[RMDB]
The record gives the reactivity of an RNA of 177 nucleotides to DMS and 2A3.
RNA sequence: GGGAACGACUCGAGUAGAGUCGAAAACUUUGAACGUUCGCGUUCAAAGAAACCUCUAUGCAGAUUGGCGAGGACGACGCUGCGGAGCGCGUUUGCCAAUAAAAAGCGUAGGCUUCGGCCUACGCAACAGUAUUAUGGCCUUCGGGCCAUAAUACUGAAAAGAAACAACAACAACAAC
Reactivity to DMS in 0.01 (KOAc 150mM, MgCl2 10mM, bicine 150mM(pH8.5), 24C), signal-to-noise 2, nucleotides 027 to 126: c000u000u000u000g000a000a000c000g030u000u000c220g010c000g040u000u000c000a000a000a000g020a090a140a130c020c010u000c180u020a110u000g010c180a100g030a030u010u000g000g010c010g010a070g020g010a050c010g000a100c010g030c010u000g010c300g000g010a040g030c000g020c020g000u000u000u000g010c020c000a030a030u010a010a090a080a100a070g000c000g010u000a000g010g000c020u010u000c280g020g000c000c000u000a000c000g010c010a010a050
Reactivity to 2A3 in 0.01 (KOAc 150mM, MgCl2 10mM, bicine 150mM(pH8.5), 24C), signal-to-noise 3, nucleotides 027 to 126: c010u000u000u010g000a000a020c010g020u030u060c280g020c000g050u010u000c020a000a000a010g000a070a000a000c030c000u080c060u150a210u220g180c100a080g070a300u020u030g010g000c040g010a100g130g050a050c010g030a080c010g020c040u190g110c130g180g240a030g020c020g000c020g000u010u010u140g000c000c000a010a020u080a010a090a010a030a000g000c000g000u000a000g000g010c010u010u050c190g150g000c000c010u000a000c000g000c000a000a000
It was measured as part of the RMDB library M2PK50.
For DMS, 1,612 sequencing reads were counted.
Conditions: 150 mM KOAc, 10 mM MgCl2 and 150 mM bicine (pH 8.5), 24 C.